[RMDB]
RNA sequence: GGGAACGACUCGAGUAGAGUCGAAAAUUGCGCAAAAUAGUGUGCAUCAUCCCAGCGUUCAAGCUCCAUGCUAAGCUGGGCGAUAAAAUAGAACGCUUGCGCCAUGGUGCGAUGAUUCGCCUGACGACACUGUCUGGACGUUCGCGUCCAGACAGUGAAAAGAAACAACAACAACAAC
Reactivity to 2A3 in 0.01 (KOAc 150mM, MgCl2 10mM, bicine 150mM(pH8.5), 24C), signal-to-noise 2, nucleotides 027 to 126: u040u020g020c020g000c000a000a000a110a210u140a180g200u030g000u000g000c030a010u010c030a030u000c000c010c020a010g000c000g060u060u040c030a000a030g030c030u030c090c050a110u170g030c060u110a090a090g000c020u100g010g030g000c020g010a010u200a080a170a040a040u170a070g060a100a000c000g000c010u030u090g040c030g000c000c030a140u140g010g030u060g000c020g020a140u180g050a060u110u060c000g020c050c040u040g070a070c060g060a000
Reactivity to DMS in 0.01 (KOAc 150mM, MgCl2 10mM, bicine 150mM(pH8.5), 24C), signal-to-noise 1, nucleotides 027 to 126: u000u030g000c020g000c000a000a070a100a190u010a090g010u010g010u000g010c000a020u000c150a130u010c000c000c010a110g000c010g030u010u000c050a090a150g030c010u000c060c080a050u000g010c070u010a120a050g000c070u000g020g000g000c120g020a080u000a050a080a130a130u020a120g000a060a020c020g030c000u000u010g010c070g000c110c020a060u010g000g030u000g000c070g000a080u000g000a100u010u000c020g020c000c100u000g060a050c200g000a260